[RMDB]
The record gives the reactivity of an RNA of 177 nucleotides to DMS and 2A3. For 2A3 the reverse transcriptase was SuperScript II with manganese. The reactions ran in a buffer of 150 mM KOAc, 10 mM MgCl2 and 150 mM bicine (pH 8.5), at 24 C. Reactivities are given for positions 27 through 126. It was measured as part of the RMDB library M2PK50.
RNA sequence: GGGAACGACUCGAGUAGAGUCGAAAAGAUGAUUAGUUCGCUAAUCAUCAAAGAACGCUGCAACGCGCAGACAGCGCGCGAGAGCGAGAAUGCGCGAAGAAAAAAGUUACGGGUUCGCCCGUAACAAGCAGUUAAUGAACUUCGGUUCAUUAACUGCAAAAGAAACAACAACAACAAC
Reactivity to DMS in 0.01 (KOAc 150mM, MgCl2 10mM, bicine 150mM(pH8.5), 24C), signal-to-noise 1, nucleotides 027 to 126: g020a000u000g000a020u000u000a030g030u000u010c200g020c000u000a020a000u000c000a000u000c000a090a080a060g010a230a110c010g020c000u000g010c130a120a130c000g010c000g030c000a060g000a300c060a010g000c020g040c000g020c000g000a290g000a100g050c020g010a160g010a040a150u000g010c050g000c040g080a090a180g040a040a070a020a140a040a180g000u000u000a000c010g000g030g000u000u020c250g020c000c020c000g000u000a000a000c000a090a080
Reactivity to 2A3 in 0.01 (KOAc 150mM, MgCl2 10mM, bicine 150mM(pH8.5), 24C), signal-to-noise 1, nucleotides 027 to 126: g010a010u000g000a020u000u020a000g040u020u050c170g000c110u010a000a010u020c000a000u000c000a000a040a000g030a070a010c030g020c010u000g000c020a210a090c020g000c000g000c030a000g080a080c050a020g050c000g000c010g020c040g090a030g020a010g090c010g000a030g040a030a050u060g000c050g000c010g040a070a120g040a130a230a000a040a000a000g000u000u000a000c000g000g000g060u010u080c180g050c040c000c000g000u000a000a000c000a000a000